Source: RMDB library RFM100, as collected in RNAgym. The record gives the reactivity of an RNA of 177 nucleotides to DMS and 2A3. The RNA was probed in 150 mM KOAc, 10 mM MgCl2 and 150 mM bicine (pH 8.5) at 24 C.
RNA sequence: GGGAACGACUCGAGUAGAGUCGAAAAUAUGUCAAAUUCCUAAUUAACGUUUUUUAUAUUCAUCGUUUCUUAGAGCCGUAAUUGUGCUGAUAUCAAUAUCAGGGAAGAACAUACCAUAUAGAGGUGUAUUUCUACUGCCAUUCGUGGCAGUAGAAAUAAAAGAAACAACAACAACAAC
Reactivity to DMS in 0.01 (KOAc 150mM, MgCl2 10mM, bicine 150mM(pH8.5), 24C), signal-to-noise 1, nucleotides 027 to 126: u040a030u020g000u020c210a010a100a030u000u050c000c040u000a040a020u000u000a060a190c120g030u010u000u000u000u000u000a140u070a060u000u010c070a000u020c090g000u040u090u000c000u000u040a090g010a090g050c030c000g000u020a070a130u010u050g000u000g000c050u000g000a000u000a120u000c200a180a080u000a100u000c000a050g000g000g020a090a000g000a030a040c170a130u010a040c100c010a050u060a110u110a090g010a010g030g040u010g010u020
Reactivity to 2A3 in 0.01 (KOAc 150mM, MgCl2 10mM, bicine 150mM(pH8.5), 24C), signal-to-noise 1, nucleotides 027 to 126: u290a010u050g270u000c030a100a120a000u030u000c000c000u120a000a140u000u100a010a000c030g000u000u000u000u000u120u000a240u000a170u080u210c010a000u040c000g000u000u030u000c000u030u120a130g030a080g050c000c030g160u230a040a110u280u000g040u000g090c000u020g000a140u080a030u050c040a180a020u040a060u160c000a000g020g020g010a110a000g140a050a000c000a150u080a030c040c050a060u190a000u010a230g150a010g000g000u020g030u010